Annotation:
An RNA of 207 nucleotides, treated with 2A3 and DMS and read out base by base. For DMS, 1,782 sequencing reads were counted. It was measured as part of the RMDB library OK3TST. The RNA was probed in 150 mM KOAc, 10 mM MgCl2 and 150 mM bicine (pH 8.5) at 24 C. 2A3 adducts were read by reverse transcription with SuperScript II with manganese. The 2A3 profile rests on 1,312 reads.
RNA sequence: GGGAACGACUCGAGUAGAGUCGAAAAGAGAGAAGUGCUGGCUUCCACAGAGCAGAGGGCGAGAGUCCACCCUUCCAAGUAUCUGGGGUGGGCCCUAAAGUUGCUAGUGCUCUUAACCUUGCCUGGGAAAGUUCAAAAAUCAACACACCAAAUAUAAACUUUUAUACCUAUUCGUAGGUAUAAAAGUAAAAGAAACAACAACAACAAC
Reactivity to 2A3 in 0.01 (KOAc 150mM, MgCl2 10mM, bicine 150mM(pH8.5), 24C), signal-to-noise 3, nucleotides 027 to 156: g070a000g000a010g010a160a020g010u030g040c060u010g060g000c010u030u000c020c030a120c030a080g050a020g010c020a010g020a080g070g030g010c030g010a040g000a010g060u000c000c000a000c000c010c020u150u080c060c020a130a060g100u130a190u270c180u290g010g000g000g000u000g000g000g000c000c010c000u140a100a100a000g030u100u090g010c030u040a030g060u020g080c010u000c000u030u070a010a010c000c000u010u080g030c010c000u010g000g000g000a040a070a020g020u080u180c090a090a080a040a020a050u120c030a090a030c030a030c010a010c060c050a000a060a020u290a040u300a300a050
Reactivity to DMS in 0.01 (KOAc 150mM, MgCl2 10mM, bicine 150mM(pH8.5), 24C), signal-to-noise 1, nucleotides 027 to 156: g000a210g000a060g000a070a150g010u000g020c050u000g010g000c020u010u000c020c030a090c100a090g000a150g060c000a170g000a050g000g050g000c030g040a140g030a100g030u000c000c010a010c010c000c000u000u000c020c080a090a280g010u000a080u010c050u000g010g000g040g000u000g010g040g040c020c000c030u040a020a060a210g020u000u000g000c020u000a080g010u000g000c010u000c030u010u000a080a150c030c030u010u010g000c010c010u000g030g010g000a010a010a110g000u010u010c030a030a070a060a170a100u000c040a030a060c030a060c030a090c050c030a040a050a090u030a150u000a090a120